[RMDB]
Source: RMDB library RSTRND, as collected in RNAgym. Structure probing data (2A3) for a 207-nucleotide construct. The 2A3 profile rests on 662 reads. 2A3 adducts were read by reverse transcription with SuperScript II with manganese.
RNA sequence: GGGAACGACUCGAGUAGAGUCGAAAAUAGGGUUACGACCCUAUCGGUCUCUAGCAAGGUGCCUGUAUCGCGCUAUAGACUGUCAACUAGAACAGGAUCGUAAAGCGGCACACUCAGGGUUGUUUUACUAAACUUAACUGAGAUCGCCAACCACGUCGCUCUAAUUUUCCUUCGGGAAAAUUAGAGCAAAAGAAACAACAACAACAAC
Reactivity to 2A3 in 0.01 (KOAc 150mM, MgCl2 10mM, bicine 150mM(pH8.5), 24C), signal-to-noise 1, nucleotides 027 to 156: u020a000g000g030g020u030u180a050c220g040a020c000c000c000u000a040u000c010g000g000u000c000u000c000u010a030g000c010a010a010g030g020u000g040c000c010u000g010u020a030u040c010g000c000g000c040u000a010u000a000g010a010c000u000g020u050c030a150a070c100u130a010g000a000a000c000a000g000g000a000u160c030g030u030a050a050a000g030c060g000g000c000a010c000a020c010u010c000a000g100g000g020u080u040g070u080u050u050u090a130c110u120a000a080a010c010u190u190a110a060c000u010g030a000g020a110u090c020g000c040c010a010a070c070c040a020c000g090u100c130